[RMDB]
RNA sequence: GGGAACGACUCGAGUAGAGUCGAAAAGAUAUGGACCAUUUGAUUUGUUGACGAGCGGUGUCGGAAACGACAUUCGCUCGAAGGAAUUGAUGGUCCUAAGUCAAAUCUACCAGUUCGCUGGUAGAAACCCUUCCUUAGUGUUCGCACUAAGGAAGGGAAAAGAAACAACAACAACAAC
Reactivity to 2A3 in 0.01 (KOAc 150mM, MgCl2 10mM, bicine 150mM(pH8.5), 24C), signal-to-noise 2, nucleotides 027 to 126: g010a010u010a000u070g020g000a010c010c010a040u080u040u300g060a010u020u010u100g300u250u300g300a280c060g000a000g000c000g040g000u010g000u000c000g010g040a000a040a030c000g030a000c000a090u290u190c060g020c020u000c000g000a000a000g170g020a010a000u000u010g010a020u010g030g000u000c000c000u020a020a000g000u030c020a050a050a280u020c000u010a020c040c000a000g050u060u080c300g060c120u000g010g020u000a000g010a020a010a000
Reactivity to DMS in 0.01 (KOAc 150mM, MgCl2 10mM, bicine 150mM(pH8.5), 24C), signal-to-noise 1, nucleotides 027 to 126: g000a000u000a150u010g000g000a010c000c020a040u000u000u000g010a000u020u000u000g030u010u000g060a300c050g010a050g010c000g000g020u000g000u010c000g040g010a080a020a050c030g000a010c000a000u000u000c010g060c010u000c010g020a060a030g020g000a020a010u000u000g000a000u000g000g010u000c000c000u010a010a120g000u000c010a120a130a130u000c000u000a030c010c020a030g000u000u010c300g020c000u000g020g000u000a020g010a030a090a090